[RMDB]
RNA sequence: GGGAACGACUCGAGUAGAGUCGAAAAUGAAAGUAGUCUCCUGCAGCGUCUGGGGUUUCCGUUGCAGUCCUCGGAACCAGGACCUCGGCGUGGCCUAGCGAGUUAUGGCGACGAACGCCGUGAAAAAGAUUAAAGCGGGAUUCGUCCCGCUUUAAUCAAAAGAAACAACAACAACAAC
Reactivity to DMS in 0.01 (KOAc 150mM, MgCl2 10mM, bicine 150mM(pH8.5), 24C), signal-to-noise 2, nucleotides 027 to 126: u000g030a090a080a110g020u000a080g010u010c050u000c030c030u010g000c050a080g000c070g010u010c020u010g030g010g050g020u000u010u000c040c050g000u000u010g000c070a070g000u020c030c020u000c050g020g010a060a060c090c090a160g010g010a040c110c040u000c010g010g000c010g040u000g000g000c010c040u000a120g010c060g020a080g010u000u000a040u010g000g000c010g020a140c270g000a140a110c000g010c000c000g020u010g000a020a090a110a110a070

The record gives the reactivity of an RNA of 177 nucleotides to DMS. Source: RMDB library M2PK90, as collected in RNAgym. For DMS, 1,250 sequencing reads were counted. Reactivities are given for positions 27 through 126. Values are in units of 0.01, from 0 to 300, in steps of 10. DMS (dimethyl sulfate) methylates the pairing face of unpaired adenines and cytosines. Conditions: 150 mM KOAc, 10 mM MgCl2 and 150 mM bicine (pH 8.5), 24 C.